[RMDB]
Source: RMDB library TTRDEL, as collected in RNAgym. Structure probing data (2A3 and DMS) for a 177-nucleotide construct. The reactions ran in a buffer of 150 mM KOAc, 10 mM MgCl2 and 150 mM bicine (pH 8.5), at 24 C. Reactivities are given for positions 27 through 126.

RNA sequence: GGGAACGACUCGAGUAGAGUCGAAAAGAUAUGGAGAAGAUCCGAUAAGAAGGUGUCGGAAACGACACACUUCUUUUGACGGAUCCUCCUAAGUCAAAACAAGCUCUUGGUUCGCCAAGAGCUUGAAGGUGUAACCAUAGUUCGCUAUGGUUACACCAAAAGAAACAACAACAACAAC
Reactivity to 2A3 in 0.01 (KOAc 150mM, MgCl2 10mM, bicine 150mM(pH8.5), 24C), signal-to-noise 3, nucleotides 027 to 126: g020a030u050a030u060g020g000a020g050a300a120g000a020u000c010c020g030a070u170a220a020g000a000a000g020g000u000g000u010c020g000g000a030a040a020c010g000a000c000a010c010a030c010u010u010c010u010u070u050u070g060a020c010g000g010a000u010c010c000u000c000c000u000a080a010g000u030c040a010a010a140a270c010a030a000g000c010u010c000u000u030g000g050u060u180c290g070c070c000a010a010g000a000g000c010u000u000g000a020a010
Reactivity to DMS in 0.01 (KOAc 150mM, MgCl2 10mM, bicine 150mM(pH8.5), 24C), signal-to-noise 3, nucleotides 027 to 126: g000a020u010a200u020g000g000a000g000a140a120g010a000u000c000c000g020a090u010a010a010g010a010a000g010g010u000g000u000c000g010g010a030a030a100c000g000a010c000a000c000a060c000u000u000c000u000u010u000u000g020a260c060g000g010a000u000c010c000u010c000c000u000a020a090g010u010c020a100a050a130a300c020a010a010g000c000u000c000u000u000g000g010u000u010c230g010c000c000a010a000g010a000g000c000u000u000g000a020a050